[RMDB]
RNA sequence: GGGAACGACUCGAGUAGAGUCGAAAAUUGACAAGCCUAGGUAGGUGCGUAACCUUAAAAUCCGUGAAGCCGUCCGUGUCUGAUUAAGGUACUGAUUGUGAUGACGAUAGUAAGUCAGCAGGUGGAAACAGGACGGAGAGUUCGCUCUCCGUCCUGUAAAAGAAACAACAACAACAAC
Reactivity to 2A3 in 0.01 (KOAc 150mM, MgCl2 10mM, bicine 150mM(pH8.5), 24C), signal-to-noise 1, nucleotides 027 to 126: u100u000g000a000c000a050a060g000c060c000u000a000g090g040u030a020g010g010u080g000c020g000u010a130a250c000c000u000u140a000a060a000a000u010c000c000g020u060g050a010a000g000c150c150g000u000c000c000g030u000g000u030c040u050g110a280u050u200a130a000g040g000u030a000c040u020g160a140u040u040g040u000g060a010u160g000a000c130g010a160u180a080g010u140a290a060g000u020c010a020g000c000a000g000g080u090g010g000a000a180
Reactivity to DMS in 0.01 (KOAc 150mM, MgCl2 10mM, bicine 150mM(pH8.5), 24C), signal-to-noise 1, nucleotides 027 to 126: u070u000g020a080c100a030a140g030c060c000u010a030g020g000u000a070g010g070u000g000c030g020u010a200a000c010c020u040u030a020a080a050a110u000c040c060g000u000g020a170a050g060c050c000g000u000c020c030g050u010g000u020c050u070g000a200u030u030a030a050g000g000u000a120c030u000g010a070u000u020g070u000g000a130u000g000a080c070g020a070u020a190g000u000a110a150g050u000c000a000g000c000a040g000g000u000g010g010a090a070